[RMDB]
RNA sequence: GGGAACGACUCGAGUAGAGUCGAAAAGGGCAGAGGUCCGCACUGGACGUGCUAGCGAGGAAGAGCUCGGAACUGAUCGUACUGGCACAGGCGCUGCGGGCGCUUCGGACGAUGAGUUCAGCGUCACACCCUGACCGGUAUUCGUACCGGUCAGGGUAAAAGAAACAACAACAACAAC
Reactivity to DMS in 0.01 (KOAc 150mM, MgCl2 10mM, bicine 150mM(pH8.5), 24C), signal-to-noise 2, nucleotides 027 to 126: g010g020g000c030a110g000a120g060g010u000c020c030g010c080a090c140u010g000g010a050c090g010u010g010c020u010a090g010c070g010a040g030g000a040a070g010a190g000c020u010c070g010g020a020a020c030u000g000a100u000c020g020u000a110c070u010g030g010c190a140c260a050g000g000c060g030c010u000g010c150g000g000g000c020g020c010u010u010c050g020g020a050c000g010a010u000g000a050g000u000u000c000a080g050c040g020u000c010a150c200
Reactivity to 2A3 in 0.01 (KOAc 150mM, MgCl2 10mM, bicine 150mM(pH8.5), 24C), signal-to-noise 1, nucleotides 027 to 126: g100g010g000c060a070g090a080g140g030u000c030c020g080c070a080c130u120g030g110a010c000g000u030g030c040u040a060g040c000g040a040g080g040a070a160g040a030g040c020u040c090g050g020a020a020c010u070g040a030u020c030g000u080a160c040u040g040g010c040a030c050a180g010g000c010g000c000u080g070c120g070g140g060c000g000c000u120u050c030g030g020a000c000g010a010u070g030a020g040u010u000c010a030g000c010g060u050c010a070c040